About this RNA: Conditions: 150 mM KOAc, 10 mM MgCl2 and 150 mM bicine (pH 8.5), 24 C. Structure probing data (2A3) for a 207-nucleotide construct. For 2A3 the reverse transcriptase was SuperScript II with manganese. It was measured as part of the RMDB library RNAMAK. Values cover nucleotides 27 to 156.
[RMDB]
RNA sequence: GGGAACGACUCGAGUAGAGUCGAAAAGUUAAAAAGGUUCGCCUUUUUAACAAAAGAUAUGGACGCUCAGGUGACAUGCUAUUGGAUCGGAAACGAUCCACAUAGCAACAGCACCGAGCGUCCUAAGUCAAAAGUCAAGAGGCUUCGGCCUCUUGACGGGAGUUAUGGGUUUCGACCCAUAACUCCCAAAAGAAACAACAACAACAAC
Reactivity to 2A3 in 0.01 (KOAc 150mM, MgCl2 10mM, bicine 150mM(pH8.5), 24C), signal-to-noise 1, nucleotides 027 to 156: g000u000u000a000a000a000a000a000g040g010u030u090c140g180c000c020u000u000u000u000u000a020a020c040a000a120a000a000g000a000u040a010u020g000g000a000c000g000c030u040c130a120g010g030u010g010a090c140a240u300g020c000u000a000u020u030g000g000a000u010c000g000g010a000a000a010c000g000a000u000c000c000a020c010a000u000a010g020c020a000a030c040a010g010c000a000c000c000g020a000g000c000g000u000c000c000u000a000a000g000u000c000a020a170a000a050g050u000c010a000a000g030a000g030g000c000u070u070c300g180g000c000c000u010c020u010u000g000a000c010